[RMDB]
RNA sequence: GGGAACGACUCGAGUAGAGUCGAAAAGAUAUGGACGAUCCAAGCGACUUGGAUUUAUAGUCGGAAACGACUAUUGUCAGUCGACUUGGAGUCGUCCUAAGUCAAAAGUGCCUGUUCGCAGGCACAAUCUACUGACUCACUUCGGUGAGUCAGUAGAAAAAGAAACAACAACAACAAC
Reactivity to 2A3 in 0.01 (KOAc 150mM, MgCl2 10mM, bicine 150mM(pH8.5), 24C), signal-to-noise 2, nucleotides 027 to 126: g020a020u070a050u190g000g010a000c000g000a000u000c010c000a000a000g000c000g020a010c020u160u300g260g030a040u050u300u080a020u000a000g000u000c010g010g000a040a090a070c010g020a000c000u020a010u000u000g020u010c010a000g000u000c000g050a300c020u000u010g020g020a000g030u020c020g010u050c000c000u000a100a030g050u000c020a040a000a000a190g010u000g000c000c000u000g020u070u140c300g020c060a000g000g000c000a000c000a000a000
Reactivity to DMS in 0.01 (KOAc 150mM, MgCl2 10mM, bicine 150mM(pH8.5), 24C), signal-to-noise 1, nucleotides 027 to 126: g000a050u010a300u000g010g000a030c000g060a120u000c010c000a030a020g020c000g000a030c000u000u000g030g010a020u050u000u000a010u000a010g010u000c010g040g010a120a160a250c000g000a010c000u000a000u000u000g000u000c000a030g030u000c000g010a140c010u010u000g010g020a020g010u000c000g000u000c000c000u000a030a120g000u030c040a070a090a130a120g000u000g010c000c000u000g000u000u020c200g020c000a010g000g000c000a010c020a040a020
Notes
Structure probing data (2A3 and DMS) for a 177-nucleotide construct. The reactions ran in a buffer of 150 mM KOAc, 10 mM MgCl2 and 150 mM bicine (pH 8.5), at 24 C.